This 207-nucleotide RNA was probed chemically with 2A3 and DMS. In probing experiments dimethyl sulfate is read out at A N1 and C N3, which are open when not base-paired. It was measured as part of the RMDB library OK3TST.
RNA sequence: GGGAACGACUCGAGUAGAGUCGAAAAGGGUAUGGAGAUAAAAGGACACAUGAGGAUCCUUGCCUGUGGAGACGUUCUGUAUCUCGACUGUGGUGAUGGACACACAAACCUAUGCGAGUGGUAAAAUUGUAUAGAACUUAACCCAUACACACAUGAAACUUUUAGGGCAGUUCGCUGCCCUAAAAGUAAAAGAAACAACAACAACAAC
Reactivity to 2A3 in 0.01 (KOAc 150mM, MgCl2 10mM, bicine 150mM(pH8.5), 24C), signal-to-noise 1, nucleotides 027 to 156: g040g010g000u050a050u090g000g000a000g000a100u080a130a150a020a000g040g000a020c000a000c060a300u170g010a090g170g040a090u050c000c000u000u050g010c000c010u100g040u090g070g000a030g000a000c020g020u080u070c010u060g070u020a090u090c020u040c060g200a170c050u090g040u030g030g050u020g030a120u050g040g030a010c040a000c000a010c000a090a010a010c010c010u040a020u070g000c000g000a000g000u030g000g070u120a080a060a040a100u000u040g040u040a010u010a070g060a030a050c010u040u090a070a050c020c060c010a000u160a060c080a000c010a000c050a140u100g070a060a160
Reactivity to DMS in 0.01 (KOAc 150mM, MgCl2 10mM, bicine 150mM(pH8.5), 24C), signal-to-noise 1, nucleotides 027 to 156: g040g000g020u010a070u000g020g000a090g030a120u020a100a050a090a000g000g010a140c030a100c120a130u070g000a270g020g010a130u020c020c010u000u000g010c020c020u000g080u030g020g020a060g070a070c150g010u000u000c060u000g020u020a000u000c040u010c010g020a030c130u000g010u000g000g000u020g000a090u000g000g000a210c100a010c060a050c080a100a220a110c060c000u000a090u000g000c020g020a150g020u030g020g000u000a110a080a050a150u010u000g000u010a160u000a100g000a060a040c040u020u000a070a260c030c000c020a100u000a100c060a090c090a080c060a040u000g020a150a070
2A3 adducts were read by reverse transcription with SuperScript II with manganese. Conditions: 150 mM KOAc, 10 mM MgCl2 and 150 mM bicine (pH 8.5), 24 C.